[RMDB]
Chemical mapping of a 177-nucleotide RNA with DMS and 2A3. The DMS profile rests on 1,381 reads. For DMS the reverse transcriptase was MarathonRT. The reactions ran in a buffer of 150 mM KOAc, 10 mM MgCl2 and 150 mM bicine (pH 8.5), at 24 C.
RNA sequence: GGGAACGACUCGAGUAGAGUCGAAAACCCUUAGCAUUCGUGCUAAGGGAAAUAACGGUCGGCUCAUGCAGCUACUCGAAAAUGCUGCUCGACCUUUUGGUAAAAUCUGGCCGUUCGCGGCCAGAAACAACGUCACUAUCUUCGGAUAGUGACGUUGAAAAGAAACAACAACAACAAC
Reactivity to DMS in 0.01 (KOAc 150mM, MgCl2 10mM, bicine 150mM(pH8.5), 24C), signal-to-noise 2, nucleotides 027 to 126: c000c000c000u010u000a000g000c000a070u000u010c210g030u010g000c010u020a010a010g000g020g010a020a010a050u010a080a110c180g000g010u000c000g000g010c190u010c160a040u000g010c000a000g010c010u010a130c160u000c100g020a100a090a120a140u010g000c000u000g000c010u010c020g010a010c000c000u000u000u000u000g010g010u020a120a030a130a140u010c010u000g020g000c000c000g000u000u030c130g000c010g020g000c000c000a000g010a020a030a120
Reactivity to 2A3 in 0.01 (KOAc 150mM, MgCl2 10mM, bicine 150mM(pH8.5), 24C), signal-to-noise 1, nucleotides 027 to 126: c000c000c000u000u000a000g000c000a000u020u050c160g110u050g000c000u000a000a000g000g000g040a050a160a000u120a050a000c070g000g000u000c010g000g040c060u060c300a070u280g010c020a000g020c000u010a040c050u040c100g090a050a060a010a140u230g000c020u000g010c000u060c020g000a000c020c000u000u110u030u070g060g000u100a000a030a000a080u030c000u000g000g000c030c020g060u040u050c300g040c000g050g010c000c010a000g010a000a000a000
Source information:
Reactivities are given for positions 27 through 126.